This 207-nucleotide RNA was probed chemically with DMS and 2A3. The reactions ran in a buffer of 150 mM KOAc, 10 mM MgCl2 and 150 mM bicine (pH 8.5), at 24 C. 2A3 adducts were read by reverse transcription with SuperScript II with manganese. The data come from the RNA Mapping Database (RMDB), library M2RFPK.
RNA sequence: GGGAACGACUCGAGUAGAGUCGAAAACCUGUUAUCUGACCAAUAACAGAAUGCACCACAGCGUAAAAUCAUCUGAUUGGGUGAGUUGGUCGCACCGCCAUUUGACGAACGAACGCCAAGCAUAAGCACUACGAGUAUGUGUUCGCACAUACUCGAACUAUCCUACCGGUUUCGACCGGUAGGAUAGAAAAGAAACAACAACAACAAC
Reactivity to DMS in 0.01 (KOAc 150mM, MgCl2 10mM, bicine 150mM(pH8.5), 24C), signal-to-noise 1, nucleotides 027 to 156: c040c030u000g020u000u000a020u010c000u000g020a040c000c050a300a020u000a010a030c010a010g010a050a040u000g060c110a150c030c060a070c150a090g010c020g040u010a100a020a100a090u000c040a120u000c020u030g000a080u000u000g010g000g030u000g000a300g010u010u010g010g020u010c000g040c010a030c020c020g130c050c010a020u000u000u010g010a060c060g030a120a100c160g000a080a090c070g000c010c020a070a090g070c050a040u000a120a120g050c000a120c040u010a180c010g010a010g000u000a010u000g060u000g000u010u000c240g020c010a030c000a010u000a000c010u000c000g010a000a070
Reactivity to 2A3 in 0.01 (KOAc 150mM, MgCl2 10mM, bicine 150mM(pH8.5), 24C), signal-to-noise 4, nucleotides 027 to 156: c010c000u000g010u000u010a020u000c000u000g000a010c000c010a000a020u000a000a000c000a010g050a120a060u120g000c040a030c060c010a050c050a030g040c010g030u070a030a080a100a060u060c030a020u020c050u120g060a210u130u160g080g000g000u000g000a000g000u010u030g010g010u010c010g030c020a010c000c000g080c040c010a070u090u080u110g060a020c040g010a160a000c050g040a050a010c020g030c010c040a040a030g000c020a080u060a170a070g070c060a060c100u150a060c100g000a000g000u010a000u000g040u000g000u030u100c170g030c090a000c000a000u000a000c000u010c000g000a000a000